[RMDB]
RNA sequence: GGGAACGACUCGAGUAGAGUCGAAAAUGGCCAACGGUAGCGCCGCGAGUGCAUAGCAUUGCACCUUCAUCGCCUGUAGGACCGUCAGCAACAUGCCGCCCAAGAACCAGGCGAGAUAGCUGGGCAAGCUUUUACCUGCGUUCGCGCAGGUAAAAGCAAAAGAAACAACAACAACAAC
Reactivity to 2A3 in 0.01 (KOAc 150mM, MgCl2 10mM, bicine 150mM(pH8.5), 24C), signal-to-noise 2, nucleotides 027 to 126: u090g040g010c040c000a010a000c020g070g000u090a010g040c050g080c140c020g040c040g000a040g020u020g100c060a070u090a110g100c030a110u050u140g010c020a040c030c000u060u150c060a230u040c050g000c000c000u010g080u120a060g030g100a040c030c030g020u030c030a000g000c080a110a160c030a060u210g010c020c000g000c000c040c000a000a090g040a000a060c060c030a000g020g020c060g000a050g020a080u120a000g080c080u080g000g000g000c090a100a030
Reactivity to DMS in 0.01 (KOAc 150mM, MgCl2 10mM, bicine 150mM(pH8.5), 24C), signal-to-noise 1, nucleotides 027 to 126: u000g030g000c010c070a210a070c020g000g010u000a010g000c080g010c030c010g000c070g000a100g040u000g020c000a000u000a260g040c150a080u020u000g000c090a020c050c020u050u020c000a180u010c040g020c050c020u000g000u050a170g000g000a080c000c050g000u010c090a090g000c060a110a120c100a050u000g000c030c000g000c000c000c020a020a170g000a130a010c110c000a040g000g000c020g000a040g010a050u000a070g090c030u000g000g010g000c050a120a120

Conditions: 150 mM KOAc, 10 mM MgCl2 and 150 mM bicine (pH 8.5), 24 C. An RNA of 177 nucleotides, treated with 2A3 and DMS and read out base by base. Reactivities are given for positions 27 through 126. The data come from the RNA Mapping Database (RMDB), library OK1LIB.